[RMDB]
RNA sequence: GGGAACGACUCGAGUAGAGUCGAAAAGAUAUGGACGAUCAUGGCGAGUCGGUCGGAAACGACACGACGAUGAGCCAUAUCGUCCUAAGUCAAAACUAAGGUAGACUGUUCGCAGUCUACCUUAGAACAAUGUCAUCGUGUUCGCACGAUGACAUUGAAAAGAAACAACAACAACAAC
Reactivity to DMS in 0.01 (KOAc 150mM, MgCl2 10mM, bicine 150mM(pH8.5), 24C), signal-to-noise 4, nucleotides 027 to 126: g000a050u000a300u010g000g000a020c020g000a000u000c240a010u010g000g010c030g000a200g010u010c000g000g010u000c000g000g000a060a060a160c020g020a010c010a080c030g010a040c000g000a080u000g000a300g010c000c000a010u000a010u000c000g010u000c000c000u000a010a060g000u000c050a100a080a090a190c000u010a000a000g000g000u000a010g010a020c000u010g010u000u010c170g020c020a000g010u000c000u010a000c000c000u000u000a000g000a090a160
Reactivity to 2A3 in 0.01 (KOAc 150mM, MgCl2 10mM, bicine 150mM(pH8.5), 24C), signal-to-noise 4, nucleotides 027 to 126: g030a010u090a030u130g010g000a000c000g020a000u050c040a010u220g010g030c000g010a050g030u010c030g010g020u000c000g000g070a060a080a040c070g030a030c200a100c300g040a020c020g040a090u160g060a020g000c010c000a000u020a000u000c010g000u000c000c010u000a010a000g010u000c030a020a010a090a110c000u010a000a000g000g000u010a000g020a010c010u010g080u110u110c300g000c200a000g010u010c000u000a000c000c000u000u000a000g000a000a000
Source: RMDB library TTRDEL, as collected in RNAgym. The record gives the reactivity of an RNA of 177 nucleotides to DMS and 2A3. The RNA was probed in 150 mM KOAc, 10 mM MgCl2 and 150 mM bicine (pH 8.5) at 24 C. Values cover nucleotides 27 to 126. For DMS the reverse transcriptase was MarathonRT.